[RMDB]
RNA sequence: GGGAACGACUCGAGUAGAGUCGAAAAGUGCUGGGGCGUACCUAGGCGUGGCGCUCUUGCGUGGCGAUACUCUGUAUGAAGAGCGCAUCGUAGGCGAUAGCAAACAGCAAGAGGCACUCACCCCCACUAUAUAAAUAGGCUUCGGCCUAUUUAUAUAAAAAGAAACAACAACAACAAC
Reactivity to DMS in 0.01 (KOAc 150mM, MgCl2 10mM, bicine 150mM(pH8.5), 24C), signal-to-noise 8, nucleotides 027 to 126: g010u000g020c050u000g010g000g020g020c050g010u000a070c040c020u000a130g010g020c150g020u010g020g010c040g010c000u000c010u000u000g010c030g020u000g010g010c030g010a070u000a130c020u000c030u000g010u010a110u010g010a090a040g010a020g010c090g010c140a070u000c030g030u010a090g010g010c020g010a120u010a090g010c020a080a100a100c060a130g020c020a040a050g010a090g010g010c020a040c020u020c070a240c080c020c000c020c020a080c130
Reactivity to 2A3 in 0.01 (KOAc 150mM, MgCl2 10mM, bicine 150mM(pH8.5), 24C), signal-to-noise 3, nucleotides 027 to 126: g050u030g010c030u030g000g000g060g030c030g040u060a060c030c030u040a090g110g080c100g030u060g090g060c060g020c020u000c010u000u000g010c030g010u050g070g000c030g020a030u040a100c070u090c030u120g060u110a180u200g160a090a030g010a010g000c050g010c070a020u030c050g030u030a040g000g110c030g030a050u110a060g030c020a030a130a110c020a030g020c000a010a040g020a050g060g020c020a020c030u050c020a070c010c000c000c000c010a010c050
Structure probing data (DMS and 2A3) for a 177-nucleotide construct.
Source: RMDB library OK2TST, as collected in RNAgym.
Reactivities are rounded to 0.1 and cut off at 0 and 3.
For DMS the reverse transcriptase was MarathonRT.
For DMS, 12,406 sequencing reads were counted.
Conditions: 150 mM KOAc, 10 mM MgCl2 and 150 mM bicine (pH 8.5), 24 C.